[RMDB]
RNA sequence: GGGAACGACUCGAGUAGAGUCGAAAAGAUAUGGAGUGUACCAGCCUAGUGGCGAAGAACUCGGAAACGAGGGAGCCAUCAGGCUAAUUACACUCCUAAGUCAAAGCUAACACUUCGGUGUUAGCAAGUUCUAGAUAAGGUUCGCCUUAUCUAGAACAAAAGAAACAACAACAACAAC
Reactivity to 2A3 in 0.01 (KOAc 150mM, MgCl2 10mM, bicine 150mM(pH8.5), 24C), signal-to-noise 5, nucleotides 027 to 126: g040a000u070a050u170g000g000a000g000u000g000u010a010c040c040a020g000c000c000u010a020g010u000g010g010c020g090a300a020g020a050a030c000u000c000g010g000a070a070a030c010g000a010g000g000g030a010g000c000c000a010u060c040a000g010g000c000u000a010a000u060u010a000c010a000c000u000c000c010u020a110a010g020u010c050a120a040a030g010c000u010a000a000c000a000c030u040u120c300g140g000u010g000u010u010a000g000c000a000a000
Reactivity to DMS in 0.01 (KOAc 150mM, MgCl2 10mM, bicine 150mM(pH8.5), 24C), signal-to-noise 6, nucleotides 027 to 126: g000a040u000a300u000g010g010a030g030u000g000u000a000c300c180a060g000c000c000u000a050g040u010g000g000c000g010a080a120g000a140a110c010u000c000g000g000a090a070a170c010g000a010g000g000g000a090g000c000c000a010u000c040a010g000g000c010u000a040a060u000u000a000c010a010c000u000c000c000u000a000a060g000u000c030a100a110a130g010c000u000a000a010c000a000c000u000u010c160g010g010u000g000u000u000a000g010c000a020a020

Chemical mapping of a 177-nucleotide RNA with 2A3 and DMS. 2A3 adducts were read by reverse transcription with SuperScript II with manganese. The data come from the RNA Mapping Database (RMDB), library TTRDEL. The RNA was probed in 150 mM KOAc, 10 mM MgCl2 and 150 mM bicine (pH 8.5) at 24 C.